[RMDB]
Notes: Chemical mapping of a 177-nucleotide RNA with 2A3 and DMS. The reactions ran in a buffer of 150 mM KOAc, 10 mM MgCl2 and 150 mM bicine (pH 8.5), at 24 C. For 2A3 the reverse transcriptase was SuperScript II with manganese. The data come from the RNA Mapping Database (RMDB), library OK2TST. As a SHAPE reagent, 2A3 marks flexible, mostly unpaired nucleotides at the ribose 2'-OH.

RNA sequence: GGGAACGACUCGAGUAGAGUCGAAAAGCCACUCACUACAGCGGCAAGGACGGCGUGGUGCGCAUCGAGCGCUCCAUUACCACCUACCAGAAGAACCCCUGGGGCUCGAACGACACCAGCUAUCUGGCGUCUAGAUGUCAUUCGUGACAUCUAGACGAAAAGAAACAACAACAACAAC
Reactivity to 2A3 in 0.01 (KOAc 150mM, MgCl2 10mM, bicine 150mM(pH8.5), 24C), signal-to-noise 2, nucleotides 027 to 126: g000c000c000a030c030u060c040a120c060u150a080c040a070g020c010g020g000c030a050a110g080g000a060c060g040g000c050g050u020g020g000u050g000c000g000c020a100u180c140g110a080g010c050g020c040u000c010c000a040u050u110a080c040c010a020c030c020u050a050c000c030a040g050a140a020g020a110a100c010c000c000c000u010g010g000g000g010c040u010c050g050a100a060c070g050a020c000a010c060c010a020g000c030u040a070u120c010u000g050g000
Reactivity to DMS in 0.01 (KOAc 150mM, MgCl2 10mM, bicine 150mM(pH8.5), 24C), signal-to-noise 3, nucleotides 027 to 126: g010c010c000a080c050u000c150a130c140u000a090c130a030g020c010g000g000c030a100a110g000g010a060c110g010g000c160g040u000g010g010u000g010c030g010c070a110u010c220g000a090g010c020g020c040u000c010c060a020u010u010a090c040c010a090c020c050u010a160c040c030a080g000a100a080g000a050a180c080c010c030c010u000g000g000g000g040c050u010c020g020a040a090c120g010a060c030a070c030c000a100g000c120u000a110u000c000u000g020g000